Chemical mapping of a 177-nucleotide RNA with 2A3 and DMS. The RNA was probed in 150 mM KOAc, 10 mM MgCl2 and 150 mM bicine (pH 8.5) at 24 C. The 2A3 profile rests on 10,181 reads. Reactivities are given for positions 27 through 126. High DMS reactivity at an A or C suggests that its Watson-Crick edge is free.

RNA sequence: GGGAACGACUCGAGUAGAGUCGAAAAGAUAUGGACGUCAUAGCGAGCUGGCAUUCGGAAACGAAUGACAGCGAUGAGCUAUACGUCCUAAGUCAAACGGCACAGAGAGUUCGCUCUCUGUGCCGAAGAAUAUCUCAUCCUUCGGGAUGAGAUAUUCAAAAGAAACAACAACAACAAC
Reactivity to 2A3 in 0.01 (KOAc 150mM, MgCl2 10mM, bicine 150mM(pH8.5), 24C), signal-to-noise 2, nucleotides 027 to 126: g000a000u020a000u040g000g010a000c020g010u060c270a020u010a010g000c020g040a030g030c030u000g030g000c020a010u010u000c000g020g000a010a000a000c000g000a010a010u000g000a010c000a000g010c000g010a020u050g000a000g000c000u000a000u000a020c010g010u020c000c000u000a010a000g000u000c000a040a070a080c010g010g000c000a000c010a000g000a000g020a000g040u150u120c300g140c200u000c000u020c010u010g010u000g010c000c000g000a010a000
Reactivity to DMS in 0.01 (KOAc 150mM, MgCl2 10mM, bicine 150mM(pH8.5), 24C), signal-to-noise 2, nucleotides 027 to 126: g010a010u000a010u010g010g010a030c000g020u000c300a010u000a000g020c010g010a030g030c000u000g000g000c000a010u010u000c000g020g000a000a010a020c000g000a010a010u000g000a010c000a000g000c000g020a050u030g000a120g020c010u010a000u000a020c000g010u000c010c000u000a000a030g000u000c000a140a160a300c010g000g000c000a010c000a030g000a010g010a020g020u000u020c300g010c020u000c000u000c000u000g010u000g000c000c010g000a000a020